[RMDB]
RNA sequence: GGGAACGACUCGAGUAGAGUCGAAAACGCUGGGAGGUUGAUCAGCUUUUGACGAGCGUGUACUGAAGCGCGCACGGUACGCUCGAUAAGCUGAUCACCCUCCUGUGCUGAAGCGCGCACGGCAACCGAAAGGUGCGGACGCUACCGUUCGCGGUAGAAAAAGGUUACGGUUCGCCGUAACCUUUUUAAAAGAAACAACAACAACAAC
Reactivity to 2A3 in 0.01 (KOAc 150mM, MgCl2 10mM, bicine 150mM(pH8.5), 24C), signal-to-noise 1, nucleotides 027 to 156: c050g010c060u080g020g000g000a000g000g000u020u000g010a010u000c000a090g020c080u100u050u080u140g250a170c100g000a000g020c160g000u260g060u120a020c000u060g100a160a080g080c020g010c010g000c040a010c010g030g000u000a000c040g000c000u000c000g020a050u020a170a000g030c000u000g000a000u000c000a000c000c000c000u000c000c000u000g000u000g000c010u060g000a130a060g010c010g000c000g020c020a030c000g000g000c020a070a070c050c050g100a100a040a000g030g000u030g060c000g000g000a000c000g010c070u020a000c030c000g050u040u050c300g000c010g110g010u020a000g030
Reactivity to DMS in 0.01 (KOAc 150mM, MgCl2 10mM, bicine 150mM(pH8.5), 24C), signal-to-noise 1, nucleotides 027 to 156: c040g050c010u000g010g000g000a030g030g000u000u010g000a030u000c000a000g010c000u000u000u000u000g050a170c030g000a020g000c070g090u010g070u000a060c010u000g020a100a060g040c050g030c040g000c000a300c030g020g040u000a070c010g000c020u000c000g050a130u000a050a030g050c000u010g000a030u000c000a000c040c010c000u010c000c000u010g020u030g000c070u000g000a100a040g050c000g020c010g060c020a300c060g030g010c050a040a080c000c020g000a110a060a130g010g000u010g020c030g000g020a080c070g020c060u000a010c010c000g030u010u010c190g070c030g000g010u000a040g010
Source information:
Structure probing data (2A3 and DMS) for a 207-nucleotide construct. The reactions ran in a buffer of 150 mM KOAc, 10 mM MgCl2 and 150 mM bicine (pH 8.5), at 24 C. The data come from the RNA Mapping Database (RMDB), library RNAMAK. DMS adducts were read by reverse transcription with MarathonRT.